[RMDB]
RNA sequence: GGGAACGACUCGAGUAGAGUCGAAAAUGUUGAGAUAGAAAACAGCAUGAAGAAUGAUGAUGGUGUUUUAGCAUGUGGAAACUCCUGCAAGGCCACAAUGAGGCACUAAUGGUCAAGGGGCCACCAGUCGCACAGUAAUAUUCGUAUUACUGUGCGAAAAAGAAACAACAACAACAAC
Reactivity to 2A3 in 0.01 (KOAc 150mM, MgCl2 10mM, bicine 150mM(pH8.5), 24C), signal-to-noise 2, nucleotides 027 to 126: u070g010u020u050g070a110g050a090u100a120g210a060a060a040a020c020a000g030c010a030u040g050a090a050g040a060a130u140g060a000u060g010a020u140g060g050u020g010u020u000u030u020a030g030c060a040u030g000u030g020g040a040a170a090c020u040c030c010u010g020c090a050a110g080g040c030c040a020c050a050a100u170g030a090g020g050c000a020c110u080a100a040u100g010g010u010c030a040a060g040g000g020g000c030c000a030c000c000a030g070
Reactivity to DMS in 0.01 (KOAc 150mM, MgCl2 10mM, bicine 150mM(pH8.5), 24C), signal-to-noise 5, nucleotides 027 to 126: u010g010u010u010g000a070g020a110u010a120g000a130a050a090a090c050a040g000c010a070u000g020a090a090g010a120a070u000g000a070u000g010a090u000g010g010u000g010u000u000u010u000a060g010c070a060u000g020u000g000g000a110a100a120c070u010c070c040u000g010c100a060a080g000g010c030c030a030c090a050a090u000g010a060g010g010c010a070c070u000a070a070u000g000g010u000c030a030a080g010g000g000g010c070c060a070c080c080a090g010